[RMDB]
RNA sequence: GGGAACGACUCGAGUAGAGUCGAAAACUAUGUAUAGUUACACCUGGCUUCACUUGUGUGACUUUUGCAAUGGGAAGAGAGAGAGAAGGUCCCCUUGGUACCUCAGCUCGGCCUUAUGGUGGCCUCUUCAACAAUUAGAGUUCGCUCUAAUUGUUGAAAAAGAAACAACAACAACAAC
Reactivity to DMS in 0.01 (KOAc 150mM, MgCl2 10mM, bicine 150mM(pH8.5), 24C), signal-to-noise 6, nucleotides 027 to 126: c020u010a090u010g010u010a040u010a020g010u000u000a030c030a030c010c030u000g010g000c160u020u010c130a090c020u010u000g010u010g020u000g000a020c030u000u000u010u000g010c040a070a110u000g000g000g000a040a060g000a050g010a070g000a090g010a080g010a120a040g010g000u000c030c030c060c130u020u010g010g010u010a040c030c010u000c080a090g000c050u000c090g010g010c030c010u000u010a050u010g010g030u010g010g000c030c000u000c090u020
Reactivity to 2A3 in 0.01 (KOAc 150mM, MgCl2 10mM, bicine 150mM(pH8.5), 24C), signal-to-noise 9, nucleotides 027 to 126: c020u020a030u130g060u040a090u030a090g000u010u020a000c010a010c010c010u020g070g040c150u210u170c110a140c140u060u030g000u000g000u010g070a040c000u090u070u100u070g020c040a090a100u110g030g050g040a080a030g050a020g000a000g000a000g000a000g020a140a040g010g010u040c010c000c000c020u030u090g030g020u090a080c000c010u050c020a030g030c030u050c050g010g030c010c000u130u110a160u160g100g020u050g030g010c010c000u010c010u000